Structure probing data (2A3 and DMS) for a 207-nucleotide construct. The 2A3 profile rests on 2,506 reads. Conditions: 150 mM KOAc, 10 mM MgCl2 and 150 mM bicine (pH 8.5), 24 C. For DMS, 2,139 sequencing reads were counted.

RNA sequence: GGGAACGACUCGAGUAGAGUCGAAAACGUAGGGAAGCGACGAUCAGUUUACUAGGGAAAGCGAUUGAUGAGUUUUUAGAGAGUAAGGAGUGAGGAUAUGGGAAAGGGAUAUUUUAAUAAGGCUGUAUGUUUAGUGUGUGGUCAUCAAGAUAGAGUGCGAGCUCAUAAGAUUCGUCUUAUGAGCUCGAAAAGAAACAACAACAACAAC
Reactivity to 2A3 in 0.01 (KOAc 150mM, MgCl2 10mM, bicine 150mM(pH8.5), 24C), signal-to-noise 3, nucleotides 027 to 156: c040g040u040a020g000g010g030a030a030g010c010g060a060c020g010a060u050c030a040g010u040u060u110a130c080u070a040g050g020g000a050a030a000g060c040g020a020u040u080g020a040u050g010a030g070u030u020u010u060u140a070g020a000g000a000g030u060a060a020g010g020a020g000u060g010a040g000g000a020u010a050u170g030g000g030a020a050a050g010g000g020a020u020a060u060u110u020u050a110a220u100a070a020g020g000c000u020g020u120a050u040g070u060u070u070a070g000u020g000u010g000u020g040g000u040c020a040u040c000a010a030g030a090u140a040g070a010g010u050g020
Reactivity to DMS in 0.01 (KOAc 150mM, MgCl2 10mM, bicine 150mM(pH8.5), 24C), signal-to-noise 1, nucleotides 027 to 156: c060g050u010a090g000g000g010a060a060g010c080g000a070c080g010a150u000c010a160g000u010u010u010a060c050u020a100g040g030g040a040a030a130g030c070g000a040u000u010g050a060u010g000a100g020u000u000u000u050u000a110g000a130g010a100g040u010a060a120g030g000a160g010u000g000a100g010g070a090u000a080u010g000g050g000a080a070a060g030g000g000a100u000a020u010u000u000u000a050a080u010a020a130g010g040c010u000g020u010a050u000g010u030u000u000a130g030u000g040u010g070u010g010g030u000c010a030u000c060a060a080g000a110u000a040g000a100g030u000g010